[RMDB]
RNA sequence: GGGAACGACUCGAGUAGAGUCGAAAAAGAAUAGGAAUAUCAAUAAAUCAACGUUUUUCAACUUAUGAAAUGCUUGAUUUUCAUUAAAAAUGAUAUAUUUCCCUACCACAAAUCCCUGUCAAGAUGACUUAGUGGCUUUCUUCGGAAAGCCACUAAGAAAAGAAACAACAACAACAAC
Reactivity to 2A3 in 0.01 (KOAc 150mM, MgCl2 10mM, bicine 150mM(pH8.5), 24C), signal-to-noise 1, nucleotides 027 to 126: a020g080a030a050u110a070g010g000a000a060u090a000u060c030a080a060u060a240a030a000u000c000a000a000c020g000u000u000u000u000u000c010a050a020c030u240u230a050u110g000a000a000a000u050g000c030u000u000g010a000u000u030u050u010c050a120u000u280a000a130a070a130a150u030g000a000u030a000u000a000u010u080u020c000c000c000u000a020c020c050a120c030a000a060a010u070c030c000c000u050g060u090c100a110a050g170a300u060g030a030
About this RNA: Structure probing data (2A3) for a 177-nucleotide construct. Values are in units of 0.01, from 0 to 300, in steps of 10. The 2A3 profile rests on 356 reads. As a SHAPE reagent, 2A3 marks flexible, mostly unpaired nucleotides at the ribose 2'-OH.